RNA sequence: GGGAACGACUCGAGUAGAGUCGAAAAGGGGUCGGUCGUUUGACGAGAAAGACAUGACGUUCCACCUGAAGCCUCCACGGGUGUCGUGAGCGUCAACAGCUUUCUCCGAGACCGACGGAGGCACCCAAACCUAAUUUAUCUUCGGAUAAAUUAGGAACAAUUGGAACACCUUCGGGUGUUCCAAUUGAAAAGAAACAACAACAACAAC
Reactivity to DMS in 0.01 (KOAc 150mM, MgCl2 10mM, bicine 150mM(pH8.5), 24C), signal-to-noise 1, nucleotides 027 to 156: g000g000g070g010u000c030g030g000u000c010g000u000u000u010g030a110c210g010a030g030a020a010a020g010a040c050a230u030g020a070c000g030u000u010c030c020a020c010c000u010g000a020a110g000c030c000u000c010c020a290c000g020g000g000u010g020u060c170g000u010g000a020g000c010g000u000c000a120a040c090a110g000c020u000u000u000c000u010c020c030g000a170g000a050c020c000g000a010c050g010g030a010g070g040c020a110c020c000c000a070a080a220c000c000u000a000a020u010u010u000a010u000c000u000u020c300g000g000a090u000a000a020a000u000u010a020g020g010a040a050
Reactivity to 2A3 in 0.01 (KOAc 150mM, MgCl2 10mM, bicine 150mM(pH8.5), 24C), signal-to-noise 2, nucleotides 027 to 156: g120g000g040g000u000c010g020g020u010c000g010u070u220u160g030a000c020g000a010g010a000a000a000g040a030c160a280u300g000a000c010g000u000u010c010c000a000c000c000u010g040a120a040g010c000c000u010c000c000a010c020g030g000g000u020g040u120c200g240u100g100a000g020c010g000u000c060a080a090c040a060g000c000u000u000u010c000u000c000c000g010a020g010a000c000c000g000a000c010g000g000a000g000g000c000a020c000c000c000a030a070a060c000c000u000a000a000u000u010u000a010u000c010u040u050c250g060g000a000u000a000a000a000u000u000a000g000g010a010a000

Structure probing data (DMS and 2A3) for a 207-nucleotide construct. Reactivities are given for positions 27 through 156. Conditions: 150 mM KOAc, 10 mM MgCl2 and 150 mM bicine (pH 8.5), 24 C.